[RMDB]
The record gives the reactivity of an RNA of 177 nucleotides to DMS and 2A3. The DMS profile rests on 2,210 reads. The 2A3 profile rests on 1,435 reads. Reactivities are rounded to 0.1 and cut off at 0 and 3. It was measured as part of the RMDB library OK1LIB.
RNA sequence: GGGAACGACUCGAGUAGAGUCGAAAAGAAAUGGCUAAAGCAAUGAAUGCAGUAGGUUAUGAUGCUAUGGCAGUGGGUAACCAUGAAUUUGACUUUGGAUACGAUCAGUUGAAAAAGUUAGAGGGUACGUGACUUGAUUGUUCGCAAUCAAGUCACGAAAAGAAACAACAACAACAAC
Reactivity to DMS in 0.01 (KOAc 150mM, MgCl2 10mM, bicine 150mM(pH8.5), 24C), signal-to-noise 2, nucleotides 027 to 126: g000a080a110a120u030g020g030c010u000a060a100a130g000c030a060a070u050g000a120a100u040g010c060a130g030u060a070g020g000u000u010a100u000g030a100u000g010c010u000a070u010g000g030c060a050g000u010g000g010g010u000a100a200c080c020a060u000g030a140a050u010u000u000g000a020c000u020u000u030g000g010a120u000a000c000g010a190u060c300a150g000u000u030g000a290a040a000a000a000g000u000u000a010g040a060g000g010g010u020a190
Reactivity to 2A3 in 0.01 (KOAc 150mM, MgCl2 10mM, bicine 150mM(pH8.5), 24C), signal-to-noise 3, nucleotides 027 to 126: g140a000a020a010u160g050g000c070u110a010a000a050g020c030a020a040u220g090a170a110u120g050c020a060g010u150a030g000g030u000u060a020u110g120a080u040g020c030u070a040u080g070g000c050a050g070u160g030g000g000u000a050a050c020c000a050u080g050a010a060u020u020u000g020a000c020u050u000u000g000g000a000u010a060c000g080a120u100c060a040g010u000u000g000a030a000a000a000a000g000u020u030a020g000a000g130g120g030u050a010